[RMDB]
RNA sequence: GGGAACGACUCGAGUAGAGUCGAAAAUACGAUAAUCAGAAGAAGCCGAACAUCAUGGCAGAUGUAACACUGAGUGAAUUGAAAGAGGUUCGCGUGCAGUAUGAUGACCUAAGAGAGGGAGCCAGGCUCAGGCCAAGAUAUUCGUAUCUUGGCCUGAAAAAGAAACAACAACAACAAC
Reactivity to 2A3 in 0.01 (KOAc 150mM, MgCl2 10mM, bicine 150mM(pH8.5), 24C), signal-to-noise 1, nucleotides 027 to 126: u140a030c000g020a030u070a160a090u150c040a000g070a140a030g040a030a010g110c050c060g030a020a010c010a040u090c010a030u040g120g000c020a000g000a090u040g060u120a040a000c030a010c060u030g030a030g070u120g080a090a060u180u090g060a090a050a090g040a050g100g040u050u030c010g000c030g040u140g090c020a010g010u070a070u160g030a060u050g070a010c010c020u100a100a000g110a000g010a040g000g040g000a010g070c020c040a030g020g090c020
Reactivity to DMS in 0.01 (KOAc 150mM, MgCl2 10mM, bicine 150mM(pH8.5), 24C), signal-to-noise 2, nucleotides 027 to 126: u030a100c050g000a020u020a080a080u000c040a080g010a080a110g030a130a160g000c040c030g010a060a100c080a050u010c050a070u010g010g020c080a060g020a060u010g020u000a040a120c100a080c100u000g020a150g000u000g000a060a060u000u000g000a050a050a080g020a090g010g030u000u000c050g010c110g030u020g020c020a000g020u000a040u010g000a090u000g000a050c070c020u010a030a050g010a150g010a030g020g010g010a080g000c080c090a040g000g000c120
About this RNA:
The data come from the RNA Mapping Database (RMDB), library OK2TRN. Chemical mapping of a 177-nucleotide RNA with 2A3 and DMS. For DMS the reverse transcriptase was MarathonRT. Values are in units of 0.01, from 0 to 300, in steps of 10. The 2A3 profile rests on 807 reads.